[RMDB]
RNA sequence: GGGAACGACUCGAGUAGAGUCGAAAACGACGCGUUGGUCCUGGAUGUCAUGAUGCCGCGGCUGGACGGCCUCGAGGUGUGCCGUCAGCUCCGCGGCACCGGCGACGACCUGCCGAUUCUGGUGCUGCCUCCGAAAAUCGUUCGCGAUUUUCGGAGGAAAAGAAACAACAACAACAAC
Reactivity to DMS in 0.01 (KOAc 150mM, MgCl2 10mM, bicine 150mM(pH8.5), 24C), signal-to-noise 1, nucleotides 027 to 126: c060g010a120c170g010c090g010u010u000g020g000u030c020c080u010g020g000a100u020g010u010c060a090u000g000a020u000g010c000c000g000c040g040g000c020u000g010g010a040c030g010g010c010c040u000c150g010a170g020g010u020g030u000g000c000c000g010u000c040a020g000c110u040c050c020g020c010g010g020c000a000c010c000g000g000c110g000a050c060g020a040c070c000u000g030c020c020g000a090u000u000c040u000g000g020u020g000c060u010g000
Reactivity to 2A3 in 0.01 (KOAc 150mM, MgCl2 10mM, bicine 150mM(pH8.5), 24C), signal-to-noise 1, nucleotides 027 to 126: c000g040a040c060g070c040g130u010u100g020g000u000c010c080u060g140g020a100u080g070u060c060a070u030g160a150u010g030c010c000g040c010g000g000c060u070g070g100a070c010g040g000c020c020u020c030g210a130g210g300u110g060u200g000c000c010g020u000c000a000g000c060u100c050c050g000c000g010g000c000a000c000c000g000g000c020g020a020c020g040a010c010c000u020g070c010c030g020a120u130u010c030u110g070g050u090g050c010u080g000